[RMDB]
An RNA of 177 nucleotides, treated with 2A3 and DMS and read out base by base. Source: RMDB library M2PK90, as collected in RNAgym. Reactivities are rounded to 0.1 and cut off at 0 and 3. The RNA was probed in 150 mM KOAc, 10 mM MgCl2 and 150 mM bicine (pH 8.5) at 24 C.

RNA sequence: GGGAACGACUCGAGUAGAGUCGAAAAGUUGCCCGAGAAGAGAUCACACAGAUGUGACACAAGGAGCGAUGUCUCAUCACUUGGUUUUCGACAAGUGACGAGUCGUUCCCAAAAUCGCUCCAAUGAAGACUAUUUGAGUUUUCGAACUCAAAUAGUCAAAAGAAACAACAACAACAAC
Reactivity to 2A3 in 0.01 (KOAc 150mM, MgCl2 10mM, bicine 150mM(pH8.5), 24C), signal-to-noise 1, nucleotides 027 to 126: g070u040u040g150c000c000c000g020a040g030a060a030g050a010g000a060u170c020a010c000a000c030a080g110a080u110g080u030g040a000c020a000c010a020a070g010g000a010g000c030g020a030u030g050u000c010u010c040a040u000c020a020c000u020u010g000g030u130u020u140u170c050g030a000c010a070a060g040u000g090a030c020g010a000g020u000c020g000u010u000c010c010c000a000a060a000a000u000c000g000c000u000c000c030a000a010u120g020a050a010
Reactivity to DMS in 0.01 (KOAc 150mM, MgCl2 10mM, bicine 150mM(pH8.5), 24C), signal-to-noise 3, nucleotides 027 to 126: g020u010u020g020c100c010c020g010a090g010a150a080g000a120g000a050u000c070a060c130a130c240a140g010a050u000g010u000g000a030c030a070c160a100a090g020g010a020g010c010g000a050u000g000u010c050u000c060a030u000c020a100c070u000u000g000g030u000u000u000u020c120g000a080c000a050a040g020u000g000a080c030g010a030g000u000c000g000u000u010c010c000c000a010a020a090a020u000c010g010c000u000c000c000a100a100u010g010a080a110

Reactivities are given for positions 27 through 126. For DMS, 2,869 sequencing reads were counted.